[RMDB]
RNA sequence: GGGAACGACUCGAGUAGAGUCGAAAAAACAAACAUCAAAUCGCAUAGCAAAGAGUCAAAAAAAUAGAGAGCUUUGCGAGACCUACCAAGGGUGAAGAGAUACCAUCCAAGGAGCUGAAGGGAAAUCGAGAGCUCACGGCGUUCGCGCCGUGAGCAACCAUUGUGUAAUGUUCGCAUUACACAAUGGAAAAGAAACAACAACAACAAC
Reactivity to 2A3 in 0.01 (KOAc 150mM, MgCl2 10mM, bicine 150mM(pH8.5), 24C), signal-to-noise 3, nucleotides 027 to 156: a010a000c130a070a050a010c080a110u160c070a050a100a050u020c010g010c010a020u060a020g010c030a030a170a050g080a070g090u140c130a110a120a070a080a110a090a040u220a060g070a010g030a020g020c010u030u040u030g010c030g010a010g020a020c010c010u030a050c060c020a030a060g010g000g010u030g040a060a030g100a000g030a060u080a110c000c030a000u030c010c010a010a040g030g000a010g030c080u080g040a060a050g040g010g020a000a070a020u110c080g020a040g010a010g200c000u010c010a010c000g000g050c020g000u040u050c200g010c010g000c070c000g010u010g000a000g000c000a010a000
Reactivity to DMS in 0.01 (KOAc 150mM, MgCl2 10mM, bicine 150mM(pH8.5), 24C), signal-to-noise 1, nucleotides 027 to 156: a030a120c030a150a060a070c080a080u030c070a070a080a130u000c020g050c060a100u000a070g050c040a050a060a190g000a190g010u030c020a030a000a140a120a150a030a300u000a130g000a160g020a150g010c000u010u000u000g000c000g000a060g000a090c030c040u000a090c040c030a030a100g000g010g000u000g010a070a040g020a160g020a180u000a040c010c000a030u000c020c010a150a180g000g000a040g030c070u040g000a100a020g000g010g020a020a040a070u010c060g010a130g010a170g030c010u010c000a000c000g000g070c000g000u000u000c250g040c020g100c020c030g000u000g000a000g050c000a000a020
The data come from the RNA Mapping Database (RMDB), library M2RFPK. An RNA of 207 nucleotides, treated with 2A3 and DMS and read out base by base. The 2A3 profile rests on 2,106 reads. The RNA was probed in 150 mM KOAc, 10 mM MgCl2 and 150 mM bicine (pH 8.5) at 24 C. 2A3 adducts were read by reverse transcription with SuperScript II with manganese.